RNA sequence: GGGAACGACUCGAGUAGAGUCGAAAACAUUUAACUUAGGUUGAUCUAGGCCAGAGACAGACCUACGUCAAGAUAAUCCCACCUUUGAAACACUUUGGUAAUGCUCCCAAAUAAUGAAUCAGAGCACAUGGAGCCAUUUCCUUAUCUUUUUUUCUGUGUUUUUCAGAUACUUCGGUAUCUGAAAAACAAAAGAAACAACAACAACAAC
Reactivity to 2A3 in 0.01 (KOAc 150mM, MgCl2 10mM, bicine 150mM(pH8.5), 24C), signal-to-noise 1, nucleotides 027 to 156: c030a020u100u140u240a040a000c000u010u000a020g060g000u010u060g040a150u020c020u030a030g260g030c050c030a060g020a010g010a070c060a050g050a060c000c000u000a010c050g000u020c060a130a060g010a120u080a040a080u110c000c000c000a040c030c060u010u130u230g130a050a140a010c040a010c040u050u180u090g010g010u050a030a030u010g030c010u070c000c040c010a040a170a010u170a020a090u080g070a020a000u120c020a030g000a030g080c010a040c030a060u110g020g010a000g010c000c020a030u040u040u000c000c000u070u070a200u130c000u070u140u020u030u000u020u000c010u010g010u000